[RMDB]
RNA sequence: GGGAACGACUCGAGUAGAGUCGAAAAUCGUGAGAUGUGGUGCCUCACGCGCUCGAGGCGUCCGUGGUCAGAGAGACCACUGACGCAAAAACUCGAGCGCAAAUAAAGCGCAUUACAUCAAGAAUAAAUCGCAUGAUAAUUUCGAUUAUCAUGCGAUAAAAGAAACAACAACAACAAC
Reactivity to 2A3 in 0.01 (KOAc 150mM, MgCl2 10mM, bicine 150mM(pH8.5), 24C), signal-to-noise 3, nucleotides 027 to 126: u120c030g030u070g080a130g000a020u000g010u000g000g010u010g000c010c010u060c020a090c150g000c010g000c000u000c000g000a000g000g000c000g000u000c000c000g000u000g000g000u000c050a040g090a030g030a020g000a300c000c000a000c000u000g000a000c000g000c000a060a150a020a040a050c000u000c000g000a000g000c000g000c000a000a010a000u130a020a040a010g050c070g000c030a000u010u000a000c000a010u010c000a000a010g110a030a020u180a060a170
Reactivity to DMS in 0.01 (KOAc 150mM, MgCl2 10mM, bicine 150mM(pH8.5), 24C), signal-to-noise 3, nucleotides 027 to 126: u060c060g010u030g010a220g000a000u000g010u010g010g000u000g000c000c040u000c090a130c270g010c000g020c010u000c000g000a000g010g000c000g000u000c010c110g030u000g000g000u020c010a200g010a170g030a190g000a000c010c000a000c010u000g000a010c000g000c010a040a030a100a070a300c000u000c010g000a020g000c000g000c020a000a010a070u020a100a050a040g000c240g020c000a000u000u000a020c020a020u000c000a050a040g010a090a050u030a070a070